RNA sequence: GGGAACGACUCGAGUAGAGUCGAAAAUGCCAAGUACAGCGCACGUACCGAAGAGCUGCUGCUUCAACCCUUGGCCCUGCUCGCUGUUGAGGAACUUCUUCGCGUUGUCAAUUUGCUGCUUGAUGUCAGCUUUCAGAUGUGCCAUAGCCAUAGAUGAGUGACAGUUAACUUUCGAGUUAACUGUCACAAAAGAAACAACAACAACAAC
Reactivity to DMS in 0.01 (KOAc 150mM, MgCl2 10mM, bicine 150mM(pH8.5), 24C), signal-to-noise 1, nucleotides 027 to 156: u020g020c020c010a090a110g020u010a090c050a060g000c070g000c010a070c080g040u030a120c080c030g020a080a070g010a150g070c000u020g060c090u010g060c000u000u000c070a110a180c040c020c000u010u010g000g020c000c020c010u010g000c020u000c050g010c000u010g000u010u010g040a190g030g000a050a100c020u000u000c030u020u000c030g040c060g020u000u020g000u000c050a060a150u010u000u000g050c000u000g010c010u000u000g010a210u000g000u000c040a100g010c050u010u000u000c050a060g000a060u010g040u010g010c030c060a140u000a080g040c040c020a110u010a120g010a150u010g000a250
Reactivity to 2A3 in 0.01 (KOAc 150mM, MgCl2 10mM, bicine 150mM(pH8.5), 24C), signal-to-noise 2, nucleotides 027 to 156: u080g010c010c000a040a010g020u070a050c030a040g010c040g010c010a030c050g050u090a110c040c120g070a070a030g010a050g020c070u040g050c050u080g010c020u160u140c030a070a070c040c000c000u000u000g000g000c000c000c030u040g040c070u020c060g070c030u060g010u080u060g020a050g030g060a050a050c010u060u050c000u090u110c070g010c030g070u040u050g050u080c030a020a130u060u050u160g030c020u010g010c010u070u110g020a070u100g090u140c010a020g000c000u020u060u080c080a070g000a070u050g020u030g100c010c010a020u060a060g020c010c040a110u090a100g110a090u150g090a040
Chemical mapping of a 207-nucleotide RNA with DMS and 2A3. DMS adducts were read by reverse transcription with MarathonRT. Conditions: 150 mM KOAc, 10 mM MgCl2 and 150 mM bicine (pH 8.5), 24 C. The DMS profile rests on 3,250 reads. For 2A3 the reverse transcriptase was SuperScript II with manganese. It was measured as part of the RMDB library OK3TST.